RNA sequence: GGGAACGACUCGAGUAGAGUCGAAAAAAAAGAUAUGGAGAUGGAACUACAAGCCCGAUGAGGCGACGAAGAGAGAUCGGAAACGAUCUCUCAGAGCCUCAUGGCUUGCCAUCUCCUAAGUCAAAAACUUAACUUGUAGGUUCGCCUACAAGUUAAGAAAAGAAACAACAACAACAAC
Reactivity to 2A3 in 0.01 (KOAc 150mM, MgCl2 10mM, bicine 150mM(pH8.5), 24C), signal-to-noise 2, nucleotides 027 to 126: a000a000a010a060g030a020u060a010u060g010g000a010g000a000u010g010g010a050a040c100u220a070c300a020a010g000c050c030c050g070a070u040g000a010g010g030c030g210a300c020g000a230a010g010a020g010a010g010a000u010c010g000g010a010a010a020c010g000a000u020c000u000c000u010c010a000g000a000g010c000c000u010c000a000u020g000g020c000u010u000g000c000c000a000u040c000u020c000c000u010a000a000g000u000c020a020a060a010a040a190
Reactivity to DMS in 0.01 (KOAc 150mM, MgCl2 10mM, bicine 150mM(pH8.5), 24C), signal-to-noise 3, nucleotides 027 to 126: a100a080a150a120g010a020u000a100u010g000g010a010g000a020u000g010g000a100a010c090u020a300c010a010a000g010c020c020c300g010a110u000g000a010g010g020c010g010a110c280g000a060a090g000a020g000a010g010a000u000c000g010g000a030a010a050c000g020a010u000c000u000c000u000c010a000g010a040g010c000c000u000c000a000u000g010g000c000u000u000g000c000c010a000u000c000u000c000c000u000a000a040g000u010c010a070a080a080a130a110
An RNA of 177 nucleotides, treated with 2A3 and DMS and read out base by base.
For 2A3 the reverse transcriptase was SuperScript II with manganese.